[RMDB]
RNA sequence: GGGAACGACUCGAGUAGAGUCGAAAAAAUAAGAGUUUGGAUUAACCUAUAGGGAAUUAGCGAUCAAGAAUACAACCUAAGGACCUGGUUGACUUAAUUAAUCCAUAGGUUGGUGGAAGCUAGCGAAGCUUGAUAUACCUUUCGAGGUAUAUCAAGCAAAAGAAACAACAACAACAAC
Reactivity to 2A3 in 0.01 (KOAc 150mM, MgCl2 10mM, bicine 150mM(pH8.5), 24C), signal-to-noise 2, nucleotides 027 to 126: a010a000u210a000a060g020a000g020u030u060u100g090g020a020u050u030a030a030c020c000u010a030u110a130g060g000g030a040a060u050u020a040g000c000g050a040u060c020a050a000g050a100a030u150a160c050a080a090c020c030u070a060a050g040g010a020c020c060u030g000g090u040u050g040a060c010u050u010a000a040u020u070a040a040u020c000c000a010u020a000g000g000u000u030g010g000u030g060g010a010a000g000c020u040a020g030c040g090a090a010
Reactivity to DMS in 0.01 (KOAc 150mM, MgCl2 10mM, bicine 150mM(pH8.5), 24C), signal-to-noise 4, nucleotides 027 to 126: a050a060u010a090a060g000a100g010u000u000u000g010g010a120u000u000a060a090c020c010u000a060u000a290g000g010g020a080a050u000u000a010g030c030g020a060u000c050a050a060g000a110a140u010a070c080a060a030c110c050u010a060a110g000g010a100c130c110u000g010g000u000u010g010a090c090u010u010a000a040u000u000a070a080u000c000c000a050u000a000g000g000u000u000g010g010u000g000g000a030a120g010c030u000a050g020c140g000a100a140